[RMDB]
RNA sequence: GGGAACGACUCGAGUAGAGUCGAAAAUCAAAGCAACACCUCUCUCAAACCUUCAGUGCCCCAGGCAUCCAUCAGAGAGAUCUCUGAAGAAUUCAGGGUAUGGCAGAGGAUGGAUACUGAAGCUGAAACCGUACGAUACGUUCGCGUAUCGUACGGUAAAAGAAACAACAACAACAAC
Reactivity to 2A3 in 0.01 (KOAc 150mM, MgCl2 10mM, bicine 150mM(pH8.5), 24C), signal-to-noise 1, nucleotides 027 to 126: u070c040a000a080a030g000c000a040a080c030a030c020c000u060c000u020c000u000c030a010a140a130c010c000u020u000c020a020g030u000g100c010c010c000c060a010g070g000c020a020u000c000c000a000u000c010a000g050a030g010a000g010a170u040c040u000c000u000g040a060a060g160a230a110u180u030c000a000g030g000g000u140a090u070g100g100c080a010g000a020g100g040a030u000g000g000a040u020a060c020u040g000a040a020g060c000u010g030a100a020
Reactivity to DMS in 0.01 (KOAc 150mM, MgCl2 10mM, bicine 150mM(pH8.5), 24C), signal-to-noise 1, nucleotides 027 to 126: u000c060a130a040a190g020c050a030a050c000a070c080c020u000c070u000c020u000c110a070a110a060c190c040u010u000c040a000g000u000g020c050c050c080c100a100g020g000c110a020u010c000c010a010u000c020a080g020a200g020a180g000a050u000c010u000c010u010g000a050a150g010a060a120u000u000c030a020g000g020g000u000a030u010g000g000c200a080g010a060g000g000a010u000g000g000a070u000a010c010u000g000a100a160g030c050u000g000a040a080
This 177-nucleotide RNA was probed chemically with 2A3 and DMS. For 2A3 the reverse transcriptase was SuperScript II with manganese. The reactions ran in a buffer of 150 mM KOAc, 10 mM MgCl2 and 150 mM bicine (pH 8.5), at 24 C. The data come from the RNA Mapping Database (RMDB), library OK2TST.